[RMDB]
RNA sequence: GGGAACGACUCGAGUAGAGUCGAAAACCAGCAUGGUUGGGUUUGCCGUAGCCCUGCCCAUUCCUGUAGAACUUGCCAGAUCAGCACUGAGACGGUUUGAGGCCUCCUGUUGUCCCUCCAGCAGAAGCAUUGAAGGUCUAUUCGUAGACCUUCAAUGAAAAGAAACAACAACAACAAC
Reactivity to 2A3 in 0.01 (KOAc 150mM, MgCl2 10mM, bicine 150mM(pH8.5), 24C), signal-to-noise 9, nucleotides 027 to 126: c010c000a020g070c080a080u140g050g000u030u040g030g020g010u050u070u100g060c020c020g040u040a020g020c010c000c000u030g010c000c020c000a040u060u060c010c010u050g050u100a050g040a120a050c020u050u090g020c010c010a030g010a140u060c030a010g060c040a030c080u040g020a030g030a080c030g050g040u030u040u120g100a070g020g010c000c010u030c000c000u040g020u070u040g030u060c010c000c000u030c020c000a010g000c000a020g030a090a010g050
Reactivity to DMS in 0.01 (KOAc 150mM, MgCl2 10mM, bicine 150mM(pH8.5), 24C), signal-to-noise 9, nucleotides 027 to 126: c020c000a140g010c160a070u010g000g010u010u000g010g010g010u000u000u010g010c040c030g000u010a120g010c030c020c020u000g010c040c010c050a130u000u000c030c020u000g000u020a080g000a060a080c070u000u010g010c040c020a060g010a090u010c060a070g020c070a070c050u010g000a110g000a090c070g010g010u000u010u010g010a110g010g000c030c010u000c020c020u000g010u010u010g000u000c020c010c010u000c100c020a060g000c070a050g010a110a110g010